[RMDB]
RNA sequence: GGGAACGACUCGAGUAGAGUCGAAAAAUUUCAACAGGGCCGAAGCGUGCGAGACGAUACCUGCAGAACAAGCACCGGCCAACUACGUACCAGCGGCCGAGGAAAGACGUAGGAUACGAGCGCAUCAAAUUAUAUAUAAUUUCGAUUAUAUAUAAUUAAAAGAAACAACAACAACAAC
Reactivity to 2A3 in 0.01 (KOAc 150mM, MgCl2 10mM, bicine 150mM(pH8.5), 24C), signal-to-noise 2, nucleotides 027 to 126: a000u040u050u040c000a050a040c030a160g040g090g000c000c010g060a080a000g030c040g080u110g030c000g040a040g060a070c060g000a000u040a120c000c000u010g050c040a040g030a140a020c070a090a000g010c010a000c040c010g000g000c040c000a030a000c010u070a010c020g100u060a060c000c030a060g040c020g050g000c020c000g050a050g010g050a110a140a000g030a020c040g000u020a070g000g030a020u020a050c020g020a010g060c020g020c030a000u080c040a060
Reactivity to DMS in 0.01 (KOAc 150mM, MgCl2 10mM, bicine 150mM(pH8.5), 24C), signal-to-noise 2, nucleotides 027 to 126: a080u000u000u030c030a070a130c090a130g010g010g040c020c020g010a120a100g010c070g010u020g010c030g000a080g020a080c070g000a080u020a090c050c030u020g000c050a090g000a090a110c120a040a060g020c120a060c060c040g000g010c030c040a020a060c110u010a040c060g010u050a070c110c070a110g000c220g000g010c020c030g000a110g010g000a100a080a040g010a030c050g000u030a050g010g020a130u000a040c010g020a140g020c080g000c060a010u030c030a050
Source: RMDB library OK1LIB, as collected in RNAgym. Chemical mapping of a 177-nucleotide RNA with 2A3 and DMS. 2A3 adducts were read by reverse transcription with SuperScript II with manganese. The DMS profile rests on 2,481 reads.